Conditions: 150 mM KOAc, 10 mM MgCl2 and 150 mM bicine (pH 8.5), 24 C. The record gives the reactivity of an RNA of 177 nucleotides to 2A3 and DMS. It was measured as part of the RMDB library TTRDEL.
RNA sequence: GGGAACGACUCGAGUAGAGUCGAAAAGAUAUGGACCUAGAGCGAAGAACUAUGUAACAAGUAUCGGAAACGAUACCGCCCAUAGGGAGCGAUUGGGUCCUAAGUCAAAGAGGCGUUCGCGCCUCAAGCUACACAAUUUCUUCGGAAAUUGUGUAGCAAAAGAAACAACAACAACAAC
Reactivity to 2A3 in 0.01 (KOAc 150mM, MgCl2 10mM, bicine 150mM(pH8.5), 24C), signal-to-noise 3, nucleotides 027 to 126: g020a010u070a030u160g000g020a010c000c050u080a050g010a040g070c030g150a300a050g030a100a090c010u020a020u070g090u180a180a070c090a250a090g010u000a010u000c010g050g000a060a030a020c020g000a010u000a020c000c010g030c000c010c000a000u030a000g000g000g000a010g030c020g110a160u090u300g010g000g000u010c010c000u020a070a020g040u000c020a040a100a120g000a010g000g020c040g020u080u110c280g060c020g030c130c000u000c000a000a000
Reactivity to DMS in 0.01 (KOAc 150mM, MgCl2 10mM, bicine 150mM(pH8.5), 24C), signal-to-noise 2, nucleotides 027 to 126: g000a020u010a300u010g000g010a000c000c000u010a020g010a280g020c000g000a080a120g030a120a190c010u000a040u000g010u000a040a080c190a230a100g000u010a000u000c000g000g000a110a090a170c010g010a000u000a000c000c050g010c300c120c000a040u000a010g000g000g000a070g020c010g000a110u020u000g000g000g010u000c000c000u000a040a090g000u000c020a080a070a140g000a020g010g030c010g020u000u010c220g020c040g010c000c000u000c020a020a060